[RMDB]
RNA sequence: GGGAACGACUCGAGUAGAGUCGAAAAGAUAUGGAUAAGCGCAGAUAAUACGAUACUUUGAUCUCGGAAACGAGGGAGUAUGGUAUUGUAGCUUAUCCUAAGUCAAACACGAGCUUCGGCUCGUGAAGCGAACGUCAAUGUUCGCAUUGACGUUCGCAAAAGAAACAACAACAACAAC
Reactivity to 2A3 in 0.01 (KOAc 150mM, MgCl2 10mM, bicine 150mM(pH8.5), 24C), signal-to-noise 1, nucleotides 027 to 126: g050a010u030a020u120g000g000a000u040a030a010g000c100g030c220a040g130a250u070a200a000u020a010c090g080a020u000a010c030u150u130u120g190a140u100c010u000c020g000g050a100a070a050c010g000a000g000g040g040a010g000u000a010u020g140g000u030a020u030u040g000u060a030g010c000u020u000a000u000c000c000u000a060a010g030u030c020a090a060a010c010a010c010g000a020g020c020u050u230c300g140g000c000u020c010g000u000g000a030a000
Reactivity to DMS in 0.01 (KOAc 150mM, MgCl2 10mM, bicine 150mM(pH8.5), 24C), signal-to-noise 1, nucleotides 027 to 126: g000a070u000a300u010g010g000a010u000a000a000g000c010g020c160a140g000a090u000a040a010u000a000c000g000a000u000a000c010u000u000u010g000a130u020c000u000c030g000g000a080a080a200c000g010a040g000g000g020a010g040u000a000u010g010g000u000a000u000u000g020u000a100g000c000u000u000a000u000c000c000u000a010a040g010u010c030a100a160a290c020a000c000g000a020g000c000u000u020c210g000g000c000u000c000g000u010g000a000a060
An RNA of 177 nucleotides, treated with 2A3 and DMS and read out base by base.
For 2A3 the reverse transcriptase was SuperScript II with manganese.
It was measured as part of the RMDB library TTRDEL.
The 2A3 profile rests on 1,674 reads.
For DMS the reverse transcriptase was MarathonRT.